[RMDB]
RNA sequence: GGGAACGACUCGAGUAGAGUCGAAAAGCAUUGAGCGGUCGACCGGGCUGGCGAUCGUGCGGGCCUGGGCGCACGGCGGCUACGUGUUCGACUUCGUGACGGUCGACCACCAGCACGGCUCGUGGGAUAAGCGCACCGGCGAGUGGCAGCUCGACGAGGUAUCGUACUACUUCGGUAGUACGAUACCAAAAGAAACAACAACAACAAC
Reactivity to 2A3 in 0.01 (KOAc 150mM, MgCl2 10mM, bicine 150mM(pH8.5), 24C), signal-to-noise 4, nucleotides 027 to 156: g060c060a060u100u200g020a030g020c040g030g070u090c040g030a180c060c000g010g010g000c020u080g050g060c030g080a060u050c050g100u090g070c000g010g000g000c000c030u110g040g070g040c050g010c050a020c040g110g000c020g010g000c040u070a060c080g020u040g000u020u010c030g020a040c030u090u110c070g150u160g090a050c070g020g000u000c000g020a010c010c000a010c010c010a020g020c010a020c130g130g000c060u090c100g020u020g000g100g010a070u080a200a050g030c070g040c110a080c020c020g010g020c010g000a040g020u100g070g020c030a030g000c010u020c000g050a060c030g040a060